[RMDB]
RNA sequence: GGGAACGACUCGAGUAGAGUCGAAAAGUCGAUGAUUUUGCAGGCCGGCUGUCGUUCUUCUUCGCCAUCGGCAUGAAUUUCUUCAUGGAAAUUGCCAAGUUGCGCGCUGCGCGCCUGCUCUGGUCAAGCAUUAGCAUAGUUUCGACUAUGCUAAUGCAAAAGAAACAACAACAACAAC
Reactivity to DMS in 0.01 (KOAc 150mM, MgCl2 10mM, bicine 150mM(pH8.5), 24C), signal-to-noise 5, nucleotides 027 to 126: g020u010c060g010a130u010g000a050u000u000u000u000g010c020a020g000g020c030c040g020g010c050u000g010u020c010g000u000u000c010u000u000c020u000u010c300g010c040c060a030u010c150g010g000c010a040u000g010a030a030u000u000u010c150u010u000c090a040u000g000g000a060a060a040u000u000g000c020c060a040a040g010u000u000g010c080g020c020g000c030u000g010c050g020c250g010c010c020u000g000c010u000c090u000g010g010u000c090a080a180